[RMDB]
RNA sequence: GGGAACGACUCGAGUAGAGUCGAAAAGAUAUGGACAUAGAACUACUUUUCAGCGAAGAACUUUCUCGGAAACGAGAAAGGGAGCUGGAGCUAUGUCCUAAGUCAAAGCAUACGUUCGCGUAUGCAACGAUCCAGCUAAGUUCGCUUAGCUGGAUCGAAAAGAAACAACAACAACAAC
Reactivity to 2A3 in 0.01 (KOAc 150mM, MgCl2 10mM, bicine 150mM(pH8.5), 24C), signal-to-noise 2, nucleotides 027 to 126: g050a020u040a010u060g020g000a000c000a000u010a020g030a140a150c060u220a150c070u300u160u190u300c030a020g000c060g180a300a020g050a010a010c000u040u000u000c000u000c000g020g040a030a010a020c000g010a000g000a010a000a000g000g000g020a000g000c030u060g160g020a010g050c000u000a000u020g010u000c010c000u000a020a010g010u000c040a170a130a000g000c010a000u000a030c020g040u010u150c300g000c000g100u000a000u000g010c020a000a010
Reactivity to DMS in 0.01 (KOAc 150mM, MgCl2 10mM, bicine 150mM(pH8.5), 24C), signal-to-noise 1, nucleotides 027 to 126: g000a040u000a200u010g000g000a020c000a000u000a020g000a080a060c070u000a210c140u020u000u000u020c000a010g030c000g000a090a120g020a140a260c010u000u000u000c000u000c010g000g000a020a100a040c000g000a000g010a000a000a000g000g000g000a020g020c000u000g010g000a000g000c000u000a020u000g010u010c000c000u000a000a030g010u000c030a110a110a040g020c000a000u000a020c000g000u000u020c170g000c000g030u000a010u000g000c000a090a040

Chemical mapping of a 177-nucleotide RNA with 2A3 and DMS. For 2A3, 2,929 sequencing reads were counted. The reactions ran in a buffer of 150 mM KOAc, 10 mM MgCl2 and 150 mM bicine (pH 8.5), at 24 C. Reactivities are given for positions 27 through 126. It was measured as part of the RMDB library TTRDEL.